An RNA of 177 nucleotides, treated with DMS and read out base by base. DMS adducts were read by reverse transcription with MarathonRT. The DMS profile rests on 1,041 reads.
[RMDB]
RNA sequence: GGGAACGACUCGAGUAGAGUCGAAAAGGCAUGGUGGCUCACGCCUGUAAUCUCAGCACUUUGGGAGGCCGAGGCAGGUGGAUCACCUGAGUUCAGGAGUUUGAGACCAGCCUGGCCAACAUGGCGAAUCUCUGCUUCACUUCGGUGAAGCAGAGAUAAAAGAAACAACAACAACAAC
Reactivity to DMS in 0.01 (KOAc 150mM, MgCl2 10mM, bicine 150mM(pH8.5), 24C), signal-to-noise 1, nucleotides 027 to 126: g000g000c020a040u030g010g060u020g000g000c060u010c030a080c030g040c000c000u000g000u000a040a040u010c020u010c000a080g020c080a030c080u000u000u010g000g000g040a150g020g000c000c040g040a010g020g020c000a010g000g000u000g000g020a170u000c050a060c070c060u000g020a180g000u010u010c020a000g010g010a040g000u000u000u010g040a280g020a020c010c000a070g000c000c000u000g020g020c000c000a070a060c100a050u000g000g020c060g050a080
Values cover nucleotides 27 to 126. The reactions ran in a buffer of 150 mM KOAc, 10 mM MgCl2 and 150 mM bicine (pH 8.5), at 24 C.